Chemical mapping of a 177-nucleotide RNA with 2A3. It was measured as part of the RMDB library OK1LIB.

[RMDB]
RNA sequence: GGGAACGACUCGAGUAGAGUCGAAAAGAAAGCUCCUCACCCGUGUGGAGGAGAAUGGCUAUAACCACAGAAACCUGAGGAAACAGGAAGCCACAACGCAAGCCAUGUGGUUUGCACACGGAAGAAACACGCUAGCGACUUUCGAGUCGCUAGCGUGAAAAGAAACAACAACAACAAC
Reactivity to 2A3 in 0.01 (KOAc 150mM, MgCl2 10mM, bicine 150mM(pH8.5), 24C), signal-to-noise 1, nucleotides 027 to 126: g070a010a040a030g000c010u010c000c000u000c010a040c000c000c000g000u000g000u010g000g040a000g000g000a000g020a000a050u000g010g040c030u030a000u170a290a040c030c010a020c030a030g080a090a090a020c000c020u090g000a070g030g210a110a170a080c070a020g000g060a000a000g000c000c030a000c040a000a060c040g030c030a000a050g000c000c030a130u180g170u130g010g000u000u000u000g000c050a020c010a000c000g020g000a010a010g000a010a060a000